[RMDB]
RNA sequence: GGGAACGACUCGAGUAGAGUCGAAAAAUCCUCGGAAACGGGGGCGGCGGCGUCCGUUCUCUAUUCUUUUCUUUUGAAAGAGGAGACGGGUCUCCGCCCGCCCCCAGCCCCGGGAUAGCCGAAGUGCCAAGUCGGAGGUUCGCCUCCGACAAAAGAAACAACAACAACAAC
Reactivity to 2A3 in 0.01 (KOAc 150mM, MgCl2 10mM, bicine 150mM(pH8.5), 24C), signal-to-noise 3, nucleotides 027 to 129: a010u040c000c040u060c040g000g020a050a030a060c060g030g000g000g000g010c000g000g000c000g000g000c040g010u020c000c000g030u240u000c000u000c000u030a240u070u100c010u000u070u020u070c050u150u300u050u300g060a000a020a010g010a000g000g010a000g000a000c010g000g000g040u030c020u000c000c000g030c040c000c000g000c000c000c000c030c000a000g000c000c030c030c010g000g040g010a020u030a050g070c020c000g020a200a010g070u070g090c000c010a100a090
Reactivity to DMS in 0.01 (KOAc 150mM, MgCl2 10mM, bicine 150mM(pH8.5), 24C), signal-to-noise 2, nucleotides 027 to 129: a000u010c020c020u050c160g050g020a070a180a180c000g040g030g010g040g020c030g050g000c020g000g000c300g010u030c000c060g020u060u020c000u020c000u000a110u070u030c000u070u020u030u020c140u020u000u020u030g000a000a000a000g000a000g010g000a060g000a000c010g010g000g000u090c030u040c030c000g010c070c000c040g050c050c050c000c010c010a010g020c000c060c000c010g000g000g000a040u030a050g020c010c030g010a110a030g040u040g040c050c080a070a070